Chemical mapping of a 207-nucleotide RNA with 2A3. For 2A3 the reverse transcriptase was SuperScript II with manganese. The data come from the RNA Mapping Database (RMDB), library OK3TST.
[RMDB]
RNA sequence: GGGAACGACUCGAGUAGAGUCGAAAACAUUUCUCUUACUGAGGGCACCUCCAUUCUGAGCCAUAACUCCCAGCCUGGUCACUAGCUUAGCCAAUGACAAGCAUAAGACAUGGCAAGGUGGUGGUAUUCAUCCAAGAUAUAGGAAUAUUAGUAAAGAGAUUAUUUUACGCUUCGGCGUAAAAUAAUCAAAAGAAACAACAACAACAAC
Reactivity to 2A3 in 0.01 (KOAc 150mM, MgCl2 10mM, bicine 150mM(pH8.5), 24C), signal-to-noise 3, nucleotides 027 to 156: c030a020u060u130u050c030u000c000u070u060a020c020u070g060a040g000g040g000c010a020c000c020u010c030c000a040u300u160c040u070g020a020g030c020c000a030u020a100a080c020u010c000c010c010a000g040c040c000u070g050g000u030c010a010c030u090a020g040c070u090u090a010g000c010c010a130a170u060g020a150c020a020a010g010c020a040u050a260a030g020a010c000a070u000g000g000c020a010a040g050g000u010g010g010u010g000g010u060a060u030u070c060a050u040c000c010a070a030g060a100u120a080u100a120g040g030a060a040u170a110u180u170a070g060u260a040a080a160g070a020